[RMDB]
RNA sequence: GGGAACGACUCGAGUAGAGUCGAAAAGAACAAGAAGUAACAAGACGUUUCUAUAACUUAUCUGAAAUCGCUCGUCAAGAUAAAGAUUAUGCAACUAUCUCAUUCUUAAACUGGUUCUUAGAUGAACUCGAGAUAACGUGUUCGCACGUUAUCUCGAAAAAGAAACAACAACAACAAC
Reactivity to 2A3 in 0.01 (KOAc 150mM, MgCl2 10mM, bicine 150mM(pH8.5), 24C), signal-to-noise 1, nucleotides 027 to 126: g010a040a060c060a020a040g060a090a000g050u060a120a080c030a080a020g080a010c070g020u070u010u000c060u180a070u000a100a000c010u010u030a000u000c000u020g010a020a080a120u080c100g000c080u070c160g030u030c020a010a020g010a020u050a040a140a000g040a070u010u050a010u120g020c000a000a070c010u000a040u090c060u030c040a060u150u000c040u020u230a110a090a090c090u050g000g010u040u040c000u030u090a160g030a240u190g040a030a010c010
Reactivity to DMS in 0.01 (KOAc 150mM, MgCl2 10mM, bicine 150mM(pH8.5), 24C), signal-to-noise 1, nucleotides 027 to 126: g000a130a010c060a100a010g040a040a050g020u000a150a030c000a060a070g000a130c150g010u020u000u000c000u030a010u000a010a040c080u010u000a070u000c030u000g000a070a130a080u000c090g010c060u030c150g010u010c070a050a030g020a000u010a030a040a030g000a150u000u000a020u020g010c250a060a030c040u000a260u000c000u000c060a170u010u000c010u010u000a010a040a230c200u000g010g010u000u000c000u000u000a160g000a080u010g000a030a060c150
An RNA of 177 nucleotides, treated with 2A3 and DMS and read out base by base. The RNA was probed in 150 mM KOAc, 10 mM MgCl2 and 150 mM bicine (pH 8.5) at 24 C. It was measured as part of the RMDB library OK2TST. The 2A3 profile rests on 723 reads. Values cover nucleotides 27 to 126. The DMS profile rests on 569 reads.